Source: RMDB library OK3TST, as collected in RNAgym. Structure probing data (2A3) for a 207-nucleotide construct. For 2A3, 592 sequencing reads were counted. Values cover nucleotides 27 to 156.
RNA sequence: GGGAACGACUCGAGUAGAGUCGAAAAUCACUCGUCAGGUGAGUGAGGGAUGGCUCACUCCCAGCGCCUCGAGCAGUUGGCGUAGAGUGAGGGAUGGACCAUAUCAGGAAGCUGGUGGCCAUGCGAGCUUCUCUGAGACUGCUCAUAGCCCAUCCUACAGGGACGUAUUUUUCGAAAUACGUCCCUGAAAAGAAACAACAACAACAAC
Reactivity to 2A3 in 0.01 (KOAc 150mM, MgCl2 10mM, bicine 150mM(pH8.5), 24C), signal-to-noise 1, nucleotides 027 to 156: u030c000a000c010u030c020g140u100c130a150g000g000u160g160a010g000u020g000a010g000g090g070a180u140g180g040c000u000c000a000c000u000c030c000c010a030g030c000g000c000c000u100c100g020a030g040c020a000g040u050u030g000g000c010g020u070a070g010a000g010u000g070a000g010g010g010a000u000g000g020a050c090c000a110u070a080u140c000a010g000g000a000a000g000c000u090g040g130u070g020g190c110c000a090u230g040c020g040a000g000c000u030u010c300u000c010u040g030a010g010a000c010u040g000c010u000c020a020u210a010g000c020c000c000a010u020c010c000u000a040

Background: The reactions ran in a buffer of 150 mM KOAc, 10 mM MgCl2 and 150 mM bicine (pH 8.5), at 24 C.